This 170-nucleotide RNA was probed chemically with DMS and 2A3.

RNA sequence: GGGAACGACUCGAGUAGAGUCGAAAAAUAAGUACUUCUCUGGUGCUAUGGAAACAGCCGCUUAUCGUGAAGCUGCAGCAUGUCAUCUUGCUAAAGCCUUACAAACAUACAGCGAGACUGGUAGUGAUAAGUUUGCGGUUCGCCGCAAACAAAAGAAACAACAACAACAAC
Reactivity to DMS in 0.01 (KOAc 150mM, MgCl2 10mM, bicine 150mM(pH8.5), 24C), signal-to-noise 4, nucleotides 027 to 129: a190u000a060a140g040u010a110c100u030u010c060u010c060u010g020g020u020g020c040u040a030u000g000g030a100a070a100c080a060g020c010c010g050c030u000u000a040u000c000g050u030g000a030a130g040c020u000g040c300a020g060c040a000u040g010u020c210a080u040c070u040u000g030c020u020a060a300a050g020c030c050u010u030a050c100a050a100a110c110a050u030a130c080a040g000c020g000a000g000a100c020u040g000g000u050a090g000u070g030a090u000a050a050
Reactivity to 2A3 in 0.01 (KOAc 150mM, MgCl2 10mM, bicine 150mM(pH8.5), 24C), signal-to-noise 3, nucleotides 027 to 129: a000u080a060a000g050u010a050c000u100u070c070u020c110u140g030g000u060g000c000u030a060u010g000g090a120a080a030c000a080g010c000c000g040c070u120u140a100u050c040g010u000g020a050a000g000c000u000g000c020a000g010c020a040u030g020u110c000a170u070c090u010u080g050c000u020a010a080a000g030c020c000u040u080a020c040a000a030a010c090a050u100a030c030a060g000c000g030a010g030a020c020u040g020g020u000a020g020u000g070a080u000a190a130

Overview:
DMS adducts were read by reverse transcription with MarathonRT.